[RMDB]
RNA sequence: GGGAACGACUCGAGUAGAGUCGAAAAGAUAUGGAUCCAUUGAGCUGGGUGUCGGAAACGACACCUCAGCAAUGAUGUGGCGUCCUAAGUCAAAACCCAGGUCCGAGGUUCGCCUCGGACCUGGGAAGUACGAAGUUAAGUUCGCUUAACUUCGUACAAAAGAAACAACAACAACAAC
Reactivity to 2A3 in 0.01 (KOAc 150mM, MgCl2 10mM, bicine 150mM(pH8.5), 24C), signal-to-noise 4, nucleotides 027 to 126: g020a000u060a020u150g000g010a010u020c010c000a010u010u060g050a030g010c000u010g000g010g000u010g010u000c000g010g030a070a050a030c020g000a000c000a020c000c010u080c000a010g000c020a010a100u080g010a020u040g030u030g020g020c080g030u000c010c000u010a120a030g080u020c020a020a050a070a270c000c000c000a010g010g000u000c000c010g000a010g050g020u110u170c300g130c060c020u000c030g000g010a000c000c020u000g010g000g000a010a000
Reactivity to DMS in 0.01 (KOAc 150mM, MgCl2 10mM, bicine 150mM(pH8.5), 24C), signal-to-noise 4, nucleotides 027 to 126: g000a030u000a300u010g000g000a020u000c010c010a010u000u000g000a140g010c000u000g000g000g020u000g000u000c000g000g000a080a060a190c000g010a010c000a010c000c000u010c010a000g030c000a120a100u000g000a090u000g000u000g000g010c270g020u010c010c000u000a060a130g010u010c030a090a050a120a160c000c000c000a000g000g000u000c000c010g010a020g010g020u010u010c230g010c030c000u000c000g010g000a000c010c000u000g000g000g010a000a020